[RMDB]
RNA sequence: GGGAACGACUCGAGUAGAGUCGAAAAACUCGUCGAACGGCGAAACAACAAGGUGGACAAACUCAUCCGUCAGAACUUUGGUCCUCAUGAAGAUAUCUGGAAUCCUAGACAUUUUGACGAGCUAUUUAGUCUGACGGAGAACGAUUCGACCGAUCCAUAGGUAGAAGCGAUUCGUCGCUUCUACCUAAAAAGAAACAACAACAACAAC
Reactivity to 2A3 in 0.01 (KOAc 150mM, MgCl2 10mM, bicine 150mM(pH8.5), 24C), signal-to-noise 2, nucleotides 027 to 156: a000c020u020c010g040u020c000g120a180a100c030g050g040c050g060a080a120a040c060a030a030c090a050a050g010g030u040g040g020a020c030a040a110a060c070u020c070a130u000c040c000g010u060c020a000g020a100a060c010u050u010u160g040g010u090c000c020u030c080a010u070g030a040a030g050a040u070a070u070c010u070g070g040a100a120u140c050c000u040a020g030a060c030a110u020u060u040u170g060a050c080g000a000g020c000u080a090u150u090u100a010g020u020c010u010g010a000c000g000g010a000g000a010a000c010g040a110u050u000c010g040a000c030c020g000a010u060c030c030a060
Conditions: 150 mM KOAc, 10 mM MgCl2 and 150 mM bicine (pH 8.5), 24 C. Chemical mapping of a 207-nucleotide RNA with 2A3. Values cover nucleotides 27 to 156. Source: RMDB library OK3TST, as collected in RNAgym.